This 307-nucleotide RNA was probed chemically with DMS and 2A3. For 2A3, 4,048 sequencing reads were counted. It was measured as part of the RMDB library POS240. For DMS, 6,506 sequencing reads were counted.

[RMDB]
RNA sequence: GGGAACGACUCGAGUAGAGUCGAAAAAUUUGCGAAAACGCAGCAGAUGAUAUAGAUGAGGUGGAGUUUGACACGAGCAUGUAUCAUUUCAGUGAGCACAUACCUCCAGCGAGGGAAAGCAAGAGUUUGAGCAAAGCUCACAGGAACAACAGCAAGCUGCAGAAGUGGUGCAAGAAACAUGAUAAGUUACUCGCUAAGUGCCUCAGGGCUAUCAAGUUUCUGAAGGACAAGAUCAGCUGCUCCUCUUCCACUACAGCUAUUCCGAAAGUGACAGCUUCGGCUGUCACAAAAGAAACAACAACAACAAC
Reactivity to DMS in 0.01 (KOAc 150mM, MgCl2 10mM, bicine 150mM(pH8.5), 24C), signal-to-noise 2, nucleotides 027 to 266: a080u000u010u000g000c030g030a170a090a120a070c120g000c100a120g010c040a040g030a020u000g000a170u000a050u000a060g000a110u010g000a150g020g010u000g010g010a080g030u000u000u010g000a130c110a070c110g010a030g010c170a060u010g010u000a030u010c040a100u000u010u000c060a050g060u010g000a090g000c020a080c120a120u000a220c160c010u020c000c100a120g010c170g000a050g020g000g010a120a120a070g000c070a120a150g020a110g010u020u000u000g030a140g020c010a040a070a130g010c030u000c030a110c140a150g000g000a030a010c150a050a080c090a060g040c010a080a130g000c030u000g000c140a060g010a120a060g020u000g010g000u000g000c070a110a050g010a080a060a030c100a080u000g000a040u010a010a100g010u000u000a090c020u020c120g000c020u000a050a150g000u000g010c050c060u000c160a050g000g010g000c050u000a010u000c090a050a070g000u010u000u010c030u010g000a130a120g000g010a040c130a040a080g000a110u000c100a050g030c050u000g000c050u000c020c070u000c050u010u010c010c050a000c040u010a170c090a030g020c020u010a160u020u000c020c060g000a090a080a080
Reactivity to 2A3 in 0.01 (KOAc 150mM, MgCl2 10mM, bicine 150mM(pH8.5), 24C), signal-to-noise 3, nucleotides 027 to 266: a000u080u040u050g010c010g090a080a050a060a070c090g010c050a040g010c020a020g020a060u020g010a020u060a030u090a260g120a080u090g010a030g010g060u030g010g050a130g060u160u300u180g120a070c080a020c090g020a040g020c030a040u050g020u100a060u040c040a030u010u020u070c050a020g020u040g060a010g030c050a020c020a090u120a050c020c020u000c040c060a030g040c050g130a050g030g060g040a100a050a040g010c070a100a030g030a010g150u060u090u120g040a030g030c090a060a050a010g000c000u000c000a050c030a010g060g070a070a040c060a030a020c000a060g050c020a040a050g010c020u050g030c030a020g030a080a010g020u050g020g000u020g010c000a010a030g020a060a040a000c020a020u110g030a050u100a110a070g040u040u050a130c020u020c010g020c020u030a160a070g090u110g180c000c000u040c060a030g010g010g000c000u030a050u220c040a210a020g020u010u040u060c010u030g070a100a050g000g000a020c020a070a020g030a180u110c030a030g030c010u040g020c020u040c000c020u030c000u060u000c000c000a010c000u050a030c020a000g040c020u060a110u120u030c060c020g180a110a120a030